[RMDB]
RNA sequence: GGGAACGACUCGAGUAGAGUCGAAAAGAAAGAAAGAAAGAACUCUGUAAAGUGAGGGAUUGCCUGGACCAGGUCGGCGGGCCUGCUCCAGUUUCCUUCGCUCUGCUCAACGGGGAGACCGCCACAAAAAACGCGUGGCUGUUCGCAGCCACGCGAACGUGUAUAUUAGCUUCGGCUAAUAUACACGAAAAGAAACAACAACAACAAC
Reactivity to 2A3 in 0.01 (KOAc 150mM, MgCl2 10mM, bicine 150mM(pH8.5), 24C), signal-to-noise 1, nucleotides 027 to 156: g060a020a090a000g070a050a060a030g060a070a130a020g040a050a040c040u130c090u080g040u150a110a170a000g020u010g000a000g020g000g000a030u100u120g080c000c000u000g000g000a000c000c030a000g010g010u030c070g040g000c050g040g000g010c000c000u000g000c000u020c000c000a000g000u030u050u000c000c000u010u000c000g000c000u040c030u090g020c010u020c010a020a110c020g010g010g000g000a040g030a040c000c000g000c000c000a050c070a040a120a040a020a010a010c030g000c000g010u020g010g000c010u020g000u030u110c180g010c050a000g000c030c010a010c010g000c020g000a000a000